[RMDB]
RNA sequence: GGGAACGACUCGAGUAGAGUCGAAAAUUACAGUACAAUUUAGUGGUAAGACUGACACCCGUAGUUUUAAUAACCGCCACAGACUUACUAAGUCCCUUACUGUCAUCAUCCAUUACCACAGCAGUCUCACAAAACGUGAACACGAUCACAGUAAACGCUCCUUGGUACUGUUCGCAGUACCAAGGAGAAAAGAAACAACAACAACAAC
Reactivity to 2A3 in 0.01 (KOAc 150mM, MgCl2 10mM, bicine 150mM(pH8.5), 24C), signal-to-noise 2, nucleotides 027 to 156: u130u040a020c020a040g050u010a070c110a080a160u110u140u140a170g000u030g120g000u090a110a080g030a040c010u010g050a040c030a060c040c140c010g000u030a030g000u050u090u110u110a230a180u130a110a010c030c030g000c000c000a000c020a010g080a030c020u090u090a020c010u070a100a040g030u040c000c000c000u010u030a030c040u020g050u070c020a010u000c000a010u030c070c000a040u110u130a090c000c050a050c020a080g080c060a040g080u000c010u000c090a060c030a000a300a100a040c100g010u020g080a050a010c040a010c110g040a030u040c060a010c010a050g060u080a070a070a070c030g000

Structure probing data (2A3) for a 207-nucleotide construct.
For 2A3, 677 sequencing reads were counted.
Source: RMDB library OK3TST, as collected in RNAgym.
Conditions: 150 mM KOAc, 10 mM MgCl2 and 150 mM bicine (pH 8.5), 24 C.